[RMDB]
RNA sequence: GGGAACGACUCGAGUAGAGUCGAAAAGAUAUGGACGUCCAUCGAGCUAUGAAGUCGAUCGGAAACGAUCGAUGGAGCUCAUGGAACGUCCUAAGUCAAACCAGCUAAUUCUUCGGAAUUAGCUGGACUUCACCCUUCCGUUCGCGGAAGGGUGAAGAAAAGAAACAACAACAACAAC
Reactivity to 2A3 in 0.01 (KOAc 150mM, MgCl2 10mM, bicine 150mM(pH8.5), 24C), signal-to-noise 1, nucleotides 027 to 126: g010a030u060a010u100g010g000a000c020g000u010c010c000a050u150c290g030a000g000c030u130a220u300g020a010a000g010u000c000g000a000u000c000g000g000a000a030a000c000g000a010u010c000g020a010u000g000g000a020g000c010u000c020a010u020g010g000a070a030c020g000u000c000c000u010a030a000g030u040c090a170a070a010c000c000a000g010c010u000a000a000u010u000c010u010u100c300g190g010a010a010u000u000a000g000c000u010g010g000a010
Reactivity to DMS in 0.01 (KOAc 150mM, MgCl2 10mM, bicine 150mM(pH8.5), 24C), signal-to-noise 1, nucleotides 027 to 126: g000a080u000a300u000g000g000a030c000g030u000c000c010a010u000c300g020a000g000c000u000a300u010g000a060a270g000u000c000g010a020u010c000g040g000a040a050a110c000g040a000u010c000g000a000u030g060g010a000g010c000u010c020a010u000g000g000a060a060c030g000u020c000c000u000a010a090g010u000c010a110a130a280c010c000a000g010c000u000a000a000u000u000c000u000u020c190g030g000a060a010u000u010a000g010c000u010g010g010a040